[RMDB]
RNA sequence: GGGAACGACUCGAGUAGAGUCGAAAACGGAUCAUGAACUGUCCAAUUAAGAUUCACAACAAUCAAUCAAUUGAUUGUUAGGUAAGGACCCAGGUAAGCUAUUUAUACUCUUGACAUGAGAAUAUUCCUCGGACAACAAUUUCGAUUGUUGUCCGAGAAAAGAAACAACAACAACAAC
Reactivity to 2A3 in 0.01 (KOAc 150mM, MgCl2 10mM, bicine 150mM(pH8.5), 24C), signal-to-noise 3, nucleotides 027 to 126: c050g040g020a030u090c040a120u160g080a030a060c020u070g020u010c000c000a010a050u140u110a070a020g120a160u070u100c060a040c030a100a000c000a000a010u000c000a020a000u080c030a050a270u080u010g000a000u000u000g020u000u030a090g000g020u060a080a070g050g020a020c000c010c000a010g000g110u080a080a070g000c040u050a080u170u170u020a120u090a080c020u020c020u060u110g060a050c030a080u190g000a030g050a060a000u150a160u150u080c000
Reactivity to DMS in 0.01 (KOAc 150mM, MgCl2 10mM, bicine 150mM(pH8.5), 24C), signal-to-noise 2, nucleotides 027 to 126: c180g000g010a050u020c050a030u000g000a040a180c050u000g000u000c020c020a020a170u040u020a090a060g130a100u060u000c050a150c080a070a030c000a000a000u000c030a000a090u010c230a090a070u070u000g000a000u000u000g020u040u000a040g020g000u000a090a120g010g000a070c010c020c010a060g000g040u040a040a050g000c170u030a070u020u020u030a100u000a020c050u000c010u000u000g000a120c130a060u000g010a050g000a090a010u000a100u000u010c080
The record gives the reactivity of an RNA of 177 nucleotides to 2A3 and DMS. The RNA was probed in 150 mM KOAc, 10 mM MgCl2 and 150 mM bicine (pH 8.5) at 24 C. For DMS, 1,639 sequencing reads were counted. DMS adducts were read by reverse transcription with MarathonRT. It was measured as part of the RMDB library OK1LIB.